[RMDB]
RNA sequence: GGGAACGACUCGAGUAGAGUCGAAAACGGCGCUGGGUGCGGCUAGCCAAUCCGCGACCUGGGUGAUGGCCGCCUCCCGCGGAAGCGGACGGGGGAACAACCCCACCUUGGUCGCCAAUCGCACGAAGAUUCCCGUAAUAUUCGUAUUACGGGAAUCAAAAGAAACAACAACAACAAC
Reactivity to 2A3 in 0.01 (KOAc 150mM, MgCl2 10mM, bicine 150mM(pH8.5), 24C), signal-to-noise 4, nucleotides 027 to 126: c030g020g040c060g000c090u110g080g100g020u030g000c000g030g010c050u050a030g040c010c020a030a080u030c040c030g010c010g000a020c000c000u010g000g020g010u010g010a150u120g030g000c010c020g100c060c010u040c000c020c010g000c020g040g120a180a020g020c020g020g020a040c060g040g000g000g000g030a020a060c030a040a060c030c010c000c000a010c000c000u000u030g000g000u010c000g000c000c000a040a070u100c020g000c020a030c050g080a060a070
Reactivity to DMS in 0.01 (KOAc 150mM, MgCl2 10mM, bicine 150mM(pH8.5), 24C), signal-to-noise 5, nucleotides 027 to 126: c120g020g030c070g030c070u010g020g000g030u010g010c040g020g000c070u000a110g020c050c070a110a110u000c080c090g010c000g010a030c000c010u000g000g000g010u010g000a100u000g010g000c040c010g010c020c010u000c050c000c010g030c040g020g030a130a120g020c010g000g000a070c120g000g000g000g010g010a100a080c130a130a290c060c010c130c000a010c020c010u000u000g000g010u000c010g020c010c270a030a040u000c050g010c040a050c080g010a080a150